[RMDB]
RNA sequence: GGGAACGACUCGAGUAGAGUCGAAAAAGACGUGUACGCACGUCACACCGUGGCGGCGGUGUAAAACAAACAUUAAGCCGCCAGCGUCCCGGAACAAGGCAUUUUCCGAUUCUCCGGGUGUUGCAAAAAAACUGAACUUGGUUCGCCAAGUUCAGAACAUUUCGUUAUAGUUCGCUAUAACGAAAUGAAAAGAAACAACAACAACAAC
Reactivity to 2A3 in 0.01 (KOAc 150mM, MgCl2 10mM, bicine 150mM(pH8.5), 24C), signal-to-noise 2, nucleotides 027 to 156: a020g000a010c020g000u000g000u040a030c230g000c120a000c000g000u000c000a010c000a010c000c020g050u020g000g000c000g000g000c000g070g000u030g030u060a150a160a000a040c070a010a160a020c030a030u130u150a180a010g020c000c000g000c000c000a000g000c000g030u110c000c000c000g000g000a050a030c070a100a050g070g030c090a100u060u090u140u140c030c050g030a070u140u010c030u020c020c010g000g000g000u010g000u020u020g000c000a000a020a010a020a020a030a100c010u000g000a000a000c010u000u000g000g000u030u030c090g000c070c000a000a010g000u000u010c000a010g000a000a000
Reactivity to DMS in 0.01 (KOAc 150mM, MgCl2 10mM, bicine 150mM(pH8.5), 24C), signal-to-noise 3, nucleotides 027 to 156: a080g020a010c000g030u000g020u000a100c270g070c010a020c000g020u000c010a130c040a080c040c050g020u010g010g060c000g030g050c000g020g030u000g000u000a030a060a140a200c190a190a120a110c030a080u000u010a060a110g100c000c010g040c010c000a010g010c050g010u000c010c010c000g000g020a060a090c110a100a120g000g010c110a150u000u010u010u020c030c020g010a210u020u000c070u000c010c020g000g020g020u000g020u000u000g000c010a010a000a090a070a080a100a200c010u000g010a010a000c010u000u000g000g020u010u010c300g000c000c000a010a010g000u010u000c000a000g000a040a150